[RMDB]
RNA sequence: GGGAACGACUCGAGUAGAGUCGAAAAGGUAGGGCAUUCGUGCCCUACCACACCUCUAAGCAGAUUGGCGAGGACGACGUCGCGGCGCACGUUUACCAACAACUACUCUCUCCUUCGGGAGAGAGAAGAACUGCCUAGAAUUCGUUCUAGGCAGUUCAAAAGAAACAACAACAACAAC
Reactivity to DMS in 0.01 (KOAc 150mM, MgCl2 10mM, bicine 150mM(pH8.5), 24C), signal-to-noise 2, nucleotides 027 to 126: g020g000u010a000g040g000g010c000a020u000u010c260g030u000g010c000c000c010u000a000c000c000a040c170a130c070c010u020c130u000a100a190g000c080a070g010a120u000u000g000g010c010g000a140g030g000a080c060g010a100c090g000u000c010g010c060g020g000c040g000c090a060c030g010u000u000u000a100c060c010a060a040c090a070a070c070u010a200c020u010c000u000c000u000c010c000u000u050c160g010g000g000a010g000a000g010a000g020a060a060
Reactivity to 2A3 in 0.01 (KOAc 150mM, MgCl2 10mM, bicine 150mM(pH8.5), 24C), signal-to-noise 2, nucleotides 027 to 126: g000g000u000a000g010g000g000c020a010u040u050c200g070u050g000c000c000c000u010a000c000c000a000c010a000c000c000u000c030u070a080a070g020c020a050g060a300u130u130g090g010c030g030a060g040g040a050c060g010a020c020g060u040c030g000c070g030g050c020g000c030a070c050g010u040u060u080a120c030c000a010a080c020a050a000c020u130a050c000u010c000u000c000u000c010c010u040u060c170g090g000g000a000g000a000g000a000g000a000a010
This 177-nucleotide RNA was probed chemically with DMS and 2A3. 2A3 adducts were read by reverse transcription with SuperScript II with manganese. DMS adducts were read by reverse transcription with MarathonRT.